RNA sequence: GGGAACGACUCGAGUAGAGUCGAAAACAAAGGGGGUCAAGACCAAAUCUCUGUUCAUACACCAGAGCGUCCCCGAGACUAUCACACACCCUCCCGACCUCAUUGUGGUGAUCGGAGGAGGCCUAGGCGCCGAGUCACAAUUCGUUGUGACUCGGCGAAAAGAAACAACAACAACAAC
Reactivity to 2A3 in 0.01 (KOAc 150mM, MgCl2 10mM, bicine 150mM(pH8.5), 24C), signal-to-noise 3, nucleotides 027 to 126: c100a000a140a070g030g000g000g010g020u120c110a080a020g090a070c000c080a150a120a160u030c040u000c010u010g050u060u100c100a100u140a230c040a020c070c050a010g000a010g010c030g070u040c000c000c000c000g010a020g020a010c050u060a040u120c000a040c030a030c040a020c060c000c010u020c010c000c000g020a030c010c000u080c040a170u000u270g010u110g080g030u050g030a200u040c020g050g020a080g040g000a010g020g000c010c030u020a100g060g000
Reactivity to DMS in 0.01 (KOAc 150mM, MgCl2 10mM, bicine 150mM(pH8.5), 24C), signal-to-noise 1, nucleotides 027 to 126: c180a040a130a080g060g010g010g030g020u010c110a060a090g000a130c060c040a090a130a090u050c010u000c010u040g000u000u000c000a010u040a070c110a090c160c040a020g000a060g000c090g000u010c040c030c020c000g000a040g090a090c060u000a040u040c010a040c040a090c160a110c050c040c010u010c040c000c010g000a020c030c040u010c000a110u000u040g020u020g000g000u000g000a010u010c040g000g000a090g030g000a110g000g020c050c160u030a040g000g010